[RMDB]
The record gives the reactivity of an RNA of 207 nucleotides to 2A3 and DMS. The DMS profile rests on 1,655 reads. Source: RMDB library OK3TST, as collected in RNAgym. For 2A3, 557 sequencing reads were counted. DMS adducts were read by reverse transcription with MarathonRT.

RNA sequence: GGGAACGACUCGAGUAGAGUCGAAAAAGUUCUAGUCCUCACCUAAGAUCAGACUCACAGGGCCCUCAAAGAAAGAGCACUAGGUUGGGCUUUGUGGUGGGGAUGAGUGUCUCAUUUUUAGUCCCAAAUUAAAAACGAGAUUUUGGGCUGUACAUCAUCGCUAAAUUAGUUUCGACUAAUUUAGCGAAAAAGAAACAACAACAACAAC
Reactivity to 2A3 in 0.01 (KOAc 150mM, MgCl2 10mM, bicine 150mM(pH8.5), 24C), signal-to-noise 1, nucleotides 027 to 156: a000g100u090u020c030u050a010g010u030c010c000u000c000a000c000c020u090a180a050g040a170u260c090a130g130a130c060u070c060a040c020a010g000g020g000c040c000c000u040c050a060a100a040g080a010a070a010g040a070g030c020a000c100u080a020g090g050u060u040g010g000g000c000u010u000u000g000u010g000g010u000g000g000g000g000a000u010g000a000g000u110g020u010c010u000c020a070u080u130u050u030u210a010g030u090c020c000c000a010a010a010u090u050a040a010a040a020a050c070g060a080g020a290u000u030u070u090g030g000g000c040u040g070u190a040c010a030u080c000a010
Reactivity to DMS in 0.01 (KOAc 150mM, MgCl2 10mM, bicine 150mM(pH8.5), 24C), signal-to-noise 1, nucleotides 027 to 156: a140g010u020u000c010u000a220g000u010c010c010u000c000a120c020c010u000a090a100g010a080u000c070a180g010a080c100u020c010a130c070a130g000g040g020c000c010c020u000c050a030a100a160g010a100a090a100g010a130g020c030a110c060u000a100g010g010u000u010g040g020g030c000u000u000u040g010u000g010g010u000g000g040g030g000a030u000g010a250g010u010g000u020c020u030c000a180u000u040u000u020u000a090g010u020c040c060c110a130a040a100u000u000a030a010a050a000a050c010g020a030g000a130u000u000u000u000g030g000g050c050u000g020u010a040c090a110u000c040a260